[RMDB]
RNA sequence: GGGAACGACUCGAGUAGAGUCGAAAAACAAUGGAUGGGUAACUGUAUUUCAGCAGACAGCCCUUGUGGUACCCCCAGGUGCACCAUCAACAUGCCAGUUGGUAGUUACUGUUAGUGCAGCAGAUAAAUCUGCUGAUGCGUUCGCGCAUCAGCAGAUAAAAGAAACAACAACAACAAC
Reactivity to 2A3 in 0.01 (KOAc 150mM, MgCl2 10mM, bicine 150mM(pH8.5), 24C), signal-to-noise 2, nucleotides 027 to 126: a010c050a050a170u090g080g040a000u050g170g000g000u120a130a050c000u000g000u010a130u060u300u160c070a100g100c030a000g020a080c020a000g060c000c030c000u000u040g070u110g000g170u160a160c000c000c000c000c000a040g000g010u000g010c000a000c000c000a000u030c000a010a010c030a070u070g140c000c000a050g120u030u010g180g010u010a000g070u050u120a070c000u000g090u080u050a060g000u060g020c040a060g000c000a000g000a060u130a050a020
Reactivity to DMS in 0.01 (KOAc 150mM, MgCl2 10mM, bicine 150mM(pH8.5), 24C), signal-to-noise 1, nucleotides 027 to 126: a010c010a010a000u000g030g000a070u000g010g010g030u000a130a160c030u000g000u000a130u020u060u060c030a100g000c090a000g000a050c200a240g000c020c000c000u040u000g000u000g020g000u000a080c130c010c000c010c030a170g030g030u000g020c000a060c010c020a040u000c000a070a060c060a090u060g000c140c040a160g000u000u000g010g000u020a030g000u000u000a030c180u000g010u000u000a090g040u000g060c030a130g000c070a000g030a040u030a040a060